[RMDB]
RNA sequence: GGGAACGACUCGAGUAGAGUCGAAAAUACUAGUGACGUAGGCCCUGGCGCUAUGCGCUGCGCUGUGAUCGUACUAUAUCGGCCGGAUCACUCGGUACGGCCCGUACUGGAUCCGAGAGUAUGGAUCACUGCCCGAAGUAUUCGUACUUCGGGCAGUAAAAGAAACAACAACAACAAC
Reactivity to 2A3 in 0.01 (KOAc 150mM, MgCl2 10mM, bicine 150mM(pH8.5), 24C), signal-to-noise 1, nucleotides 027 to 126: u050a000c020u040a020g060u020g080a000c030g050u060a020g020g070c000c000c000u020g010g040c070g020c040u100a090u300g110c050g020c060u060g020c030g020c010u050g030u120g090a030u110c000g050u010a000c070u030a050u040a000u220c030g020g020c030c070g020g010a090u040c010a030c120u080c040g030g040u020a060c050g080g110c010c050c030g000u040a050c010u030g080g000a020u020c000c020g080a090g020a030g230u050a050u200g080g000a000u010c010
Reactivity to DMS in 0.01 (KOAc 150mM, MgCl2 10mM, bicine 150mM(pH8.5), 24C), signal-to-noise 1, nucleotides 027 to 126: u030a050c050u000a040g030u020g010a060c130g020u000a120g000g000c030c030c090u020g000g000c020g000c010u000a040u000g020c140g010c060u000g010c150g000c070u010g050u000g000a090u000c140g020u000a030c060u010a080u000a150u010c150g030g030c050c040g010g000a060u010c020a090c170u020c090g010g010u000a030c040g010g000c050c060c070g010u000a030c050u000g010g000a040u000c000c000g000a130g000a110g010u010a050u010g010g020a040u000c010